[RMDB]
RNA sequence: GGGAACGACUCGAGUAGAGUCGAAAACAAGUAAAACUGUACUGAUCUAAAUGAAAAAUGUUUCUCUUCCUAAUAAUCGCAGGUCCUUCAAUGGACAUUAUCUGCCAUUAUCAGUCGAAGAUCGAACGUGUAAAGAUGUUUUCGAACAUCUUUACACAAAAGAAACAACAACAACAAC
Reactivity to 2A3 in 0.01 (KOAc 150mM, MgCl2 10mM, bicine 150mM(pH8.5), 24C), signal-to-noise 9, nucleotides 027 to 126: c020a020a040g060u120a060a110a090a080c090u110g070u140a050c040u080g110a150u080c030u150a100a110a100u180g130a040a050a040a040a070u120g010u010u020u000c020u000c000u000u010c000c000u010a010a010u010a000a000u010c000g000c000a000g000g050u000c000c010u100u200c120a210a300u210g010g000a000c000a010u050u090a070u010c000u000g000c000c000a000u000u010a000u000c020a000g070u110c080g040a010a010g010a030u110c090g030a040a030c080
Reactivity to DMS in 0.01 (KOAc 150mM, MgCl2 10mM, bicine 150mM(pH8.5), 24C), signal-to-noise 8, nucleotides 027 to 126: c070a100a070g010u000a060a090a110a160c140u000g000u000a060c060u000g000a100u020c060u010a080a080a080u010g000a030a060a050a120a120u000g020u000u000u000c040u010c010u000u000c010c000u000a040a000u000a000a000u010c300g000c000a000g010g010u000c000c000u010u020c300a100a070u020g010g020a010c010a100u010u000a110u030c010u000g010c000c090a010u000u000a000u000c030a000g000u020c170g010a010a000g020a080u020c200g000a070a080c190

This 177-nucleotide RNA was probed chemically with 2A3 and DMS. High DMS reactivity at an A or C suggests that its Watson-Crick edge is free. For DMS the reverse transcriptase was MarathonRT.